The record gives the reactivity of an RNA of 177 nucleotides to 2A3. The 2A3 profile rests on 754 reads. Conditions: 150 mM KOAc, 10 mM MgCl2 and 150 mM bicine (pH 8.5), 24 C.

RNA sequence: GGGAACGACUCGAGUAGAGUCGAAAAAGUGAUAACUCGUAUCGGAAAAUAGGGAAAGGUUAUAGAAGGAUGGAGUUUCUAUAAAGCAUUUACCCUAUCUGUUAUCACCUAACGCAAGUUAUCCACCCUCACGUUCCCGAUUCGUCGGGAACGUGAGAAAAGAAACAACAACAACAAC
Reactivity to 2A3 in 0.01 (KOAc 150mM, MgCl2 10mM, bicine 150mM(pH8.5), 24C), signal-to-noise 2, nucleotides 027 to 126: a000g110u100g050a000u010a020a010c010u000c000g000u020a030u070c030g010g030a010a000a110a000u000a030g000g010g000a000a000a060g000g020u010u000a000u000a000g050a060a000g070g190a050u240g060g040a090g230u080u000u000c000u000a000u000a040a010a010g150c050a110u020u000u270a180c000c000c000u010a010u010c070u100g100u020u180a240u160c030a040c060c000u030a040a000c010g000c070a000a040g000u000u000a000u020c040c000a000c020c000

The data come from the RNA Mapping Database (RMDB), library RFM100.